Record summary: Structure probing data (2A3 and DMS) for a 207-nucleotide construct. Conditions: 150 mM KOAc, 10 mM MgCl2 and 150 mM bicine (pH 8.5), 24 C. Reactivities are given for positions 27 through 156.
RNA sequence: GGGAACGACUCGAGUAGAGUCGAAAAGAAGGUGGGUCAGGGCUCGGACCGCACCAAUUAGAUGUAACUAUUUCGAGCCCAUUAAUGGCGUUUUCGCCUAGGUCAGAGCACGCCGUGGCUCGACCCAAAUAAAUAAAUAAUAGCACGGCGGAUAGAAAGUAUAUUACGGGUUCGCCCGUAAUAUACUAAAAGAAACAACAACAACAAC
Reactivity to 2A3 in 0.01 (KOAc 150mM, MgCl2 10mM, bicine 150mM(pH8.5), 24C), signal-to-noise 2, nucleotides 027 to 156: g130a070a020g030g000u010g000g000g020u020c020a030g020g020g000c010u000c000g020g000a010c010c020g020c050a020c000c030a000a040u140u110a030g020a090u130g070u160a110a070c070u070a180u120u110u150c000g000a000g000c000c000c000a000u010u090a010a110u040g000g000c020g060u060u040u190u260c030g070c000c000u040a030g010g000u010c150a120g020a010g000c010a000c000g000c000c000g000u000g000g040c000u000c000g000a000c000c000c010a070a080a060u150a060a020a010u130a010a030a040u150a030a050u070a050g010c000a000c010g000g010c050g000g000a010u070a080g130a040a150
Reactivity to DMS in 0.01 (KOAc 150mM, MgCl2 10mM, bicine 150mM(pH8.5), 24C), signal-to-noise 1, nucleotides 027 to 156: g000a070a110g000g000u010g010g000g000u010c050a090g060g000g040c000u010c010g000g040a050c050c050g060c000a060c000c000a060a160u000u000a100g020a090u000g020u020a080a150c100u010a110u010u010u000c000g010a020g020c010c010c010a110u000u000a050a060u000g000g000c030g020u020u020u030u000c010g060c030c000u000a010g000g000u000c010a170g030a100g000c030a180c000g010c000c020g010u010g040g020c030u000c020g000a000c010c010c020a010a110a110u000a040a060a070u000a050a050a120u000a090a120u000a110g030c020a000c030g000g020c000g000g000a180u010a030g010a290a160